Source: RMDB library TTRDES, as collected in RNAgym. An RNA of 177 nucleotides, treated with DMS and 2A3 and read out base by base. For DMS, 17,236 sequencing reads were counted.

RNA sequence: GGGAACGACUCGAGUAGAGUCGAAAAGAUAUGGAUCGUUGAAGAGCAACAGCGUGCCCAUCGGAAACGAUGGACACGACAUGCUCCAACGAUCCUAAGUCAAAAGACUUACCUUCGGGUAAGUCAAGUAAGCAUAUUAGUUCGCUAAUAUGCUUACAAAAGAAACAACAACAACAAC
Reactivity to DMS in 0.01 (KOAc 150mM, MgCl2 10mM, bicine 150mM(pH8.5), 24C), signal-to-noise 8, nucleotides 027 to 126: g000a000u000a080u010g000g010a010u000c010g010u000u000g010a260a180g020a020g030c010a130a120c250a140g010c000g010u000g000c010c000c000a000u000c010g020g010a020a010a020c000g020a010u000g000g000a000c000a010c000g000a010c130a170u020g010c000u000c010c010a000a010c000g010a000u000c000c000u000a000a060g000u000c000a130a120a150a140g000a010c000u000u000a000c000c000u000u020c230g040g010g000u000a000a000g000u000c010a020a090
Reactivity to 2A3 in 0.01 (KOAc 150mM, MgCl2 10mM, bicine 150mM(pH8.5), 24C), signal-to-noise 9, nucleotides 027 to 126: g000a000u010a010u040g000g000a000u000c020g010u010u030g200a300a290g010a130g020c140a090a280c160a300g050c010g000u010g000c000c000c000a010u000c010g000g010a010a000a000c000g000a000u000g000g010a000c000a010c010g020a000c010a150u300g000c000u000c000c000a000a000c010g000a000u000c000c000u000a000a010g000u000c000a020a010a090a190g000a000c000u000u000a000c000c000u030u100c300g060g000g000u000a000a010g000u000c000a000a020

High DMS reactivity at an A or C suggests that its Watson-Crick edge is free. Conditions: 150 mM KOAc, 10 mM MgCl2 and 150 mM bicine (pH 8.5), 24 C.